[RMDB]
RNA sequence: GGGAACGACUCGAGUAGAGUCGAAAAGAUAUGGAUCGAAUAGGAGAAGUGGUCAAAACAGCUACAUCGGAAACGAUGUAGCUGUGAACCGGCCAUGUGCCUUCGGGAACUCCUACGAUCCUAAGUCCAAAUCAGCUAUGUUCGCAUAGCUGAUUUGAAAAGAAACAACAACAACAAC
Reactivity to 2A3 in 0.01 (KOAc 150mM, MgCl2 10mM, bicine 150mM(pH8.5), 24C), signal-to-noise 1, nucleotides 027 to 126: g010a000u070a020u120g010g000a000u010c000g040a300a300u030a110g020g010a020g000a180a050g060u010g010g000u030c000a060a300a050a000c000a000g010c000u030a020c010a010u000c010g050g000a000a030a070c010g000a010u000g000u010a000g020c030u010g010u000g000a000a010c070c000g030g000c020c020a000u090g110u190g050c030c030u060u080c270g060g000g000a030a030c000u000c020c000u000a000c000g000a000u000c000c000u000a030a000g010u000c000
Reactivity to DMS in 0.01 (KOAc 150mM, MgCl2 10mM, bicine 150mM(pH8.5), 24C), signal-to-noise 4, nucleotides 027 to 126: g010a010u000a070u010g010g000a000u000c000g020a140a220u000a020g000g010a020g000a300a180g020u000g010g000u000c000a080a090a210a030c000a010g000c000u010a000c010a000u000c000g010g010a040a010a050c010g010a000u000g010u000a000g020c000u000g000u000g000a040a120c300c300g000g000c000c000a000u000g010u000g000c000c000u020u010c210g030g010g010a040a300c000u000c000c000u000a090c010g000a000u000c000c000u000a010a080g010u000c010
This 177-nucleotide RNA was probed chemically with 2A3 and DMS. It was measured as part of the RMDB library TTRINS. DMS (dimethyl sulfate) methylates the pairing face of unpaired adenines and cytosines.